[RMDB]
RNA sequence: GGGAACGACUCGAGUAGAGUCGAAAAGACAAAUGCAGCAUAUUAGGCUAAGCAGGAAAGGGACGGUAGCUGCUGGUGUCAGUUCAUACGGUGUGAUGCAUCUGCGUCGUGCACACAUGCACCCAAACAUUCCUCUCUCGUUCGCGAGAGAGGAAUGAAAAGAAACAACAACAACAAC
Reactivity to 2A3 in 0.01 (KOAc 150mM, MgCl2 10mM, bicine 150mM(pH8.5), 24C), signal-to-noise 4, nucleotides 027 to 126: g040a030c020a010a110a020u110g010c000a020g020c020a060u050a060u200u120a110g050g040c020u050a070a040g020c030a050g100g070a090a060a040g050g040g020a030c030g030g000u050a010g000c030u040g000c030u040g020g050u050g010u030c020a030g030u060u100c040a040u100a120c090g050g000u010g000u020g040a170u030g010c010a030u000c050u100g070c020g110u170c040g020u040g000c010a020c000a000c000a040u050g050c000a070c000c010c000a010a070a000
Reactivity to DMS in 0.01 (KOAc 150mM, MgCl2 10mM, bicine 150mM(pH8.5), 24C), signal-to-noise 4, nucleotides 027 to 126: g000a070c050a030a100a090u010g000c020a040g020c040a080u010a080u000u000a050g020g000c050u010a060a120g030c070a030g010g010a050a080a100g020g000g000a040c080g010g000u000a070g010c040u010g010c020u010g010g020u010g000u000c020a070g020u010u000c080a080u000a110c100g020g020u000g010u000g000a110u010g000c020a040u010c090u010g000c100g010u010c140g000u000g010c030a010c050a060c050a060u000g010c080a100c020c000c040a030a080a190